[RMDB]
RNA sequence: GGGAACGACUCGAGUAGAGUCGAAAAGAUAUGGAUGGCUUUGUGGGAGAAUGUGGAUCGGAAACGAUCCAUGAAUUCGAGGAUCACACUGAGCCAUCCUAAGUCAAAAGCAUGGUUCGCCAUGCAACAUAUGGUGUGUCUUCGGACACACCAUAUGAAAAGAAACAACAACAACAAC
Reactivity to DMS in 0.01 (KOAc 150mM, MgCl2 10mM, bicine 150mM(pH8.5), 24C), signal-to-noise 5, nucleotides 027 to 126: g000a010u000a080u010g000g010a020u000g000g010c010u010u000u000g020u010g010g000g030a110g010a050a020u000g040u000g000g000a010u000c000g010g000a030a030a060c010g010a010u010c000c010a010u000g010a080a110u000u000c010g000a190g030g000a180u010c080a070c010a030c220u010g000a020g000c000c000a010u000c000c000u000a000a060g000u010c020a110a100a130a150g010c010a010u000g000g010u000u010c300g030c020c000a000u000g020c000a090a120
Reactivity to 2A3 in 0.01 (KOAc 150mM, MgCl2 10mM, bicine 150mM(pH8.5), 24C), signal-to-noise 4, nucleotides 027 to 126: g010a010u020a020u060g000g000a000u000g000g000c000u070u100u100g020u020g020g100g080a300g030a100a020u070g010u000g010g020a010u010c000g000g000a020a010a000c010g000a000u000c010c000a000u020g080a030a150u020u020c030g060a220g110g130a060u190c040a010c010a010c040u070g040a010g020c000c000a000u000c000c000u000a000a010g000u000c010a080a030a120a020g000c010a000u020g020g040u100u150c260g040c100c000a000u020g000c010a000a010